The record gives the reactivity of an RNA of 177 nucleotides to DMS and 2A3. Values cover nucleotides 27 to 126. Source: RMDB library OK2TST, as collected in RNAgym. For DMS, 6,125 sequencing reads were counted. For DMS the reverse transcriptase was MarathonRT.

RNA sequence: GGGAACGACUCGAGUAGAGUCGAAAAAUGUCCUGAUGGAUGGGCCCUGGAUCAGCACCCAGUGGGUUUGUACCUCCUCCUCUGACUCUGAGACAUCACCCAGCCUCCAGGUUUCUAACUGGGGAAGUGAAAAAGGAGAUUUCGAUCUCCUUUUUCAAAAAGAAACAACAACAACAAC
Reactivity to DMS in 0.01 (KOAc 150mM, MgCl2 10mM, bicine 150mM(pH8.5), 24C), signal-to-noise 5, nucleotides 027 to 126: a070u010g010u000c010c000u000g010a110u010g010g020a070u000g010g010g010c070c060c030u000g000g000a070u010c050a110g000c130a120c110c010c020a070g010u000g010g010g020u000u010u000g010u000a120c070c040u000c030c020u000c030c020u000c030u000g010a100c070u000c020u000g020a130g010a060c070a050u000c080a140c020c000c010a150g010c080c010u000c000c010a030g010g000u000u000u010c150u010a080a100c020u000g000g010g010g010a070a100g000
Reactivity to 2A3 in 0.01 (KOAc 150mM, MgCl2 10mM, bicine 150mM(pH8.5), 24C), signal-to-noise 2, nucleotides 027 to 126: a000u030g010u000c000c000u020g060a110u150g060g010a040u040g020g020g000c030c000c000u040g060g000a080u090c040a020g060c030a050c010c010c020a030g060u160g000g000g030u130u170u190g100u150a130c000c010u000c010c000u010c000c000u020c030u060g040a040c010u040c010u030g050a090g000a060c010a020u040c020a050c000c000c010a010g060c030c000u000c010c000a000g020g020u080u230u030c100u140a050a070c010u000g020g010g000g010a020a060g100